An RNA of 177 nucleotides, treated with 2A3 and DMS and read out base by base. For DMS, 17,712 sequencing reads were counted. For 2A3 the reverse transcriptase was SuperScript II with manganese.
RNA sequence: GGGAACGACUCGAGUAGAGUCGAAAAACAGCUGAAGUCUGACCACCAGCGCAUCGACCUGCUGAUCAACAACGCCGGGGUGAUGUAUACACCCCGACAGACCACAGCAGACGGCUUCGAGAUGCAGAAGUUUUCCUAUUUUCGAAUAGGAAAACUUAAAAGAAACAACAACAACAAC
Reactivity to 2A3 in 0.01 (KOAc 150mM, MgCl2 10mM, bicine 150mM(pH8.5), 24C), signal-to-noise 8, nucleotides 027 to 126: a000c030a000g020c040u170g110a130a030g080u070c030u060g070a120c010c030a030c010c020a030g050c020g000c070a040u040c020g030a060c010c010u010g000c000u020g030a210u080c040a020a090c010a070a050c110g000c020c000g000g000g000g020u010g010a110u130g060u070a030u070a070c000a010c000c000c000c000g000a000c000a000g000a010c010c040a020c010a050g000c000a000g060a090c090g050g010c020u090u090c110g160a170g010a080u070g010c020a030g090
Reactivity to DMS in 0.01 (KOAc 150mM, MgCl2 10mM, bicine 150mM(pH8.5), 24C), signal-to-noise 8, nucleotides 027 to 126: a140c060a060g000c040u010g030a090a110g010u040c020u010g000a230c060c010a130c120c110a090g020c070g000c030a030u000c030g000a120c100c000u000g000c010u000g000a130u020c110a080a090c080a090a130c250g000c030c010g010g000g020g010u000g010a100u040g000u040a110u040a130c000a010c000c000c000c000g000a000c010a050g000a090c170c140a080c020a030g000c000a010g010a160c170g010g020c100u020u010c080g000a180g000a080u010g010c040a130g010